[RMDB]
RNA sequence: GGGAACGACUCGAGUAGAGUCGAAAAGAUCGUCAACGAAUAUUAGCCGCAGAGGCUGAGAAGUUAGAAAUUCAACUCGACAAUGAUGCUUGGCAGUGGCUCAUGCAGCAUCAUGAGCAUAACCUGAGUGACUGCAUUAUUUCGAUAAUGCAGUCACAAAAGAAACAACAACAACAAC
Reactivity to 2A3 in 0.01 (KOAc 150mM, MgCl2 10mM, bicine 150mM(pH8.5), 24C), signal-to-noise 2, nucleotides 027 to 126: g020a080u090c020g080u010c060a000a050c000g090a100a070u150a090u130u050a030g010c050c020g000c040a090g040a050g300g000c010u000g010a030g000a060a010g010u070u120a030g040a020a110a020u120u110c010a020a030c010u000c020g040a060c030a010a120u040g030a020u060g030c020u060u050g140g010c060a070g060u060g090g040c020u040c030a020u010g000c010a000g040c010a070u070c000a010u060g010a000g000c010a050u070a100a040c000c010u020g030a020
Reactivity to DMS in 0.01 (KOAc 150mM, MgCl2 10mM, bicine 150mM(pH8.5), 24C), signal-to-noise 3, nucleotides 027 to 126: g010a100u000c110g010u010c090a050a050c070g030a070a100u020a150u010u000a010g000c000c000g000c300a150g020a260g010g010c010u000g000a010g000a120a140g000u000u000a040g010a040a170a100u010u020c030a040a040c040u010c010g010a090c090a180a030u000g000a030u000g000c030u000u000g010g000c020a090g020u000g010g000c030u000c050a090u000g010c110a100g000c080a030u010c010a010u000g000a040g010c060a040u010a110a100c050c010u000g000a160

Notes
An RNA of 177 nucleotides, treated with 2A3 and DMS and read out base by base. The reactions ran in a buffer of 150 mM KOAc, 10 mM MgCl2 and 150 mM bicine (pH 8.5), at 24 C. 2A3 is a SHAPE reagent: it acylates the 2'-hydroxyl of flexible nucleotides of all four kinds. The 2A3 profile rests on 2,100 reads. For DMS the reverse transcriptase was MarathonRT.